[RMDB]
RNA sequence: GGGAACGACUCGAGUAGAGUCGAAAAUCUUCAUCCUUCGAAAGGGUGACCGCAGUUUCUACACCAGGGCGGGGGUCUUCGGCCUCGACGAAGAGGGAUACUUGGUGAAUCCCGCCAACGGGCUGCGCAGCCAAGGAUGGUUCGCCAUCCUUGGCUGAAAAGAAACAACAACAACAAC
Reactivity to 2A3 in 0.01 (KOAc 150mM, MgCl2 10mM, bicine 150mM(pH8.5), 24C), signal-to-noise 2, nucleotides 027 to 126: u020c020u040u050c010a000u010c000c010u080u130c060g300a300a030a030g030g000g010u010g020a030c050c040g060c050a000g000u090u140u100c100u040a090c050a070c030c090a050g100g030g000c020g000g000g010g000g030u000c070u100u170c060g110g000c000c000u060c010g150a210c190g150a220a100g010a040g000g010g010a070u090a170c070u130u180g050g020u060g010a030a020u010c000c000c050g010c040c010a040a030c020g000g010g060c000u000g000c010g000
Reactivity to DMS in 0.01 (KOAc 150mM, MgCl2 10mM, bicine 150mM(pH8.5), 24C), signal-to-noise 2, nucleotides 027 to 126: u000c060u010u010c010a020u000c030c020u030u000c280g010a190a130a060g000g020g050u010g010a030c300c070g000c000a020g000u000u000u000c080u020a230c130a240c090c000a200g000g000g020c000g030g000g010g050g010u000c010u020u000c010g000g000c000c030u000c050g000a080c220g000a140a100g000a050g000g000g010a090u000a110c090u000u040g030g000u010g010a090a100u000c000c050c020g020c020c000a030a060c150g000g000g030c010u000g000c030g000